[RMDB]
RNA sequence: GGGAACGACUCGAGUAGAGUCGAAAAUCGAUAUGCAGAUUUUCUGCAAAUUGAAGCAUGGGAGGUCAUAACGCAGGAGCGGACCUUGAUCAGUUGUGUGAACCUGCUGAUCACACAAAAGUGCCCUCCGAGAGAGUAAUUUCGAUUACUCUCUCGGAAAAGAAACAACAACAACAAC
Reactivity to DMS in 0.01 (KOAc 150mM, MgCl2 10mM, bicine 150mM(pH8.5), 24C), signal-to-noise 2, nucleotides 027 to 126: u010c000g000a040u000a080u000g000c010a000g000a160u010u010u060u000c000u020g040c010a000a050a040u000u010g000a020a110g050c110a040u010g000g000g000a030g000g040u020c020a200u020a040a180c040g000c000a090g000g000a120g020c000g000g000a000c030c020u000u000g000a000u000c010a050g020u010u020g000u000g020u010g010a110a160c110c040u010g000c000u010g000a010u000c000a030c090a030c010a120a030a050a080g030u000g000c000c000c000u000
Reactivity to 2A3 in 0.01 (KOAc 150mM, MgCl2 10mM, bicine 150mM(pH8.5), 24C), signal-to-noise 6, nucleotides 027 to 126: u040c000g010a010u020a020u080g000c000a010g040a080u110u140u200u060c000u010g000c000a010a040a010u040u050g040a050a010g100c140a110u140g040g000g000a020g020g000u010c020a090u140a300a070c050g000c030a070g060g220a120g070c020g010g010a010c000c000u010u010g010a020u000c010a020g030u020u070g090u050g060u060g180a060a110c010c010u010g020c000u000g010a010u010c010a000c000a010c000a010a240a040a010g020u010g030c000c000c000u000
An RNA of 177 nucleotides, treated with DMS and 2A3 and read out base by base. 2A3 adducts were read by reverse transcription with SuperScript II with manganese. For DMS the reverse transcriptase was MarathonRT. The reactions ran in a buffer of 150 mM KOAc, 10 mM MgCl2 and 150 mM bicine (pH 8.5), at 24 C.